[RMDB]
RNA sequence: GGGAACGACUCGAGUAGAGUCGAAAAAUCUGUCUUCGUGGGUCAGUAGGUUGAGAUAGUUGUGCGCCAGCUCGUUACUGAGGAUGUUCGUGCCGUCAUUAAUACGCAGGAUGCAAAUCCCUACUGGAUUGCACCCUGUAUUCGUACAGGGUGCAAUAAAAGAAACAACAACAACAAC
Reactivity to DMS in 0.01 (KOAc 150mM, MgCl2 10mM, bicine 150mM(pH8.5), 24C), signal-to-noise 4, nucleotides 027 to 126: a090u000c050u010g000u000c040u000u000c090g010u000g010g010g010u010c030a050g010u020a030g010g000u020u010g010a080g000a080u010a100g000u000u000g000u010g020c020g000c100c030a040g000c020u010c070g000u020u030a050c070u030g000a110g010g010a060u010g010u010u010c090g030u000g020c000c020g000u000c040a040u020u000a070a090u010a130c130g010c050a050g010g000a040u010g000c070a030a090a130u000c030c000c070u010a060c100u000g000g000
Reactivity to 2A3 in 0.01 (KOAc 150mM, MgCl2 10mM, bicine 150mM(pH8.5), 24C), signal-to-noise 2, nucleotides 027 to 126: a010u050c010u050g070u060c050u000u050c020g090u180g010g000g070u030c000a000g020u040a020g070g000u030u160g040a060g010a130u090a090g090u070u150g070u030g040c010g000c010c010a000g030c010u010c000g070u050u010a040c060u040g000a000g030g010a100u110g030u090u150c050g020u140g010c030c000g050u000c020a010u020u160a090a040u030a030c040g000c010a000g020g050a050u040g000c010a000a000a110u020c000c000c000u010a030c030u020g000g050